Overview
The record gives the reactivity of an RNA of 207 nucleotides to 2A3 and DMS. For 2A3 the reverse transcriptase was SuperScript II with manganese. Reactivities are given for positions 27 through 156. Reactivities are rounded to 0.1 and cut off at 0 and 3.
RNA sequence: GGGAACGACUCGAGUAGAGUCGAAAAUAACACUGGAGGCUGCGUAUCACUCUAGGGUACGUGAUAGUGCGAUAUAAGAAGCACUGGUACAUGCCGGCAGGGACAGUUAAGAGAUGGCCGCAGUCUCAAAAGGGGUCAUUCUUCGGAAUGACCCCAAGGUGACUAAAAGAUUCGUCUUUUAGUCACCAAAAGAAACAACAACAACAAC
Reactivity to 2A3 in 0.01 (KOAc 150mM, MgCl2 10mM, bicine 150mM(pH8.5), 24C), signal-to-noise 3, nucleotides 027 to 156: u110a030a050c060a040c110u100g100g010a000g000g000c000u000g010c010g000u020a100u180c000a000c030u010c020u040a060g060g020g010u030a040c040g030u030g030a030u040a040g010u000g010c010g010a030u060a020u110a300a060g130a150a000g000c000a010c000u000g010g000u030a020c010a010u120g030c010c020g020g030c030a070g020g040g070a060c060a130g020u050u060a090a020g010a010g010a150u010g000g000c000c010g000c000a000g000u000c000u000c010a000a020a000a010g030g000g000g000u000c000a000u000u000c010u030u040c130g070g000a000a000u000g000a000c000c000c000c010a000a000
Reactivity to DMS in 0.01 (KOAc 150mM, MgCl2 10mM, bicine 150mM(pH8.5), 24C), signal-to-noise 2, nucleotides 027 to 156: u010a120a090c030a070c050u000g010g030a060g030g010c000u000g000c010g010u000a060u000c010a140c070u000c030u000a120g000g030g030u000a000c070g030u010g010a040u000a020g030u010g010c000g000a160u000a200u010a160a210g010a190a280g010c030a020c000u000g000g030u000a030c030a090u000g020c000c040g050g030c040a120g000g000g020a080c070a050g030u000u000a100a100g000a130g030a100u000g000g000c300c030g000c030a070g000u010c010u000c000a030a030a080a120g000g030g030g010u000c000a020u000u000c000u000u020c250g020g000a070a050u000g000a000c000c000c000c020a010a000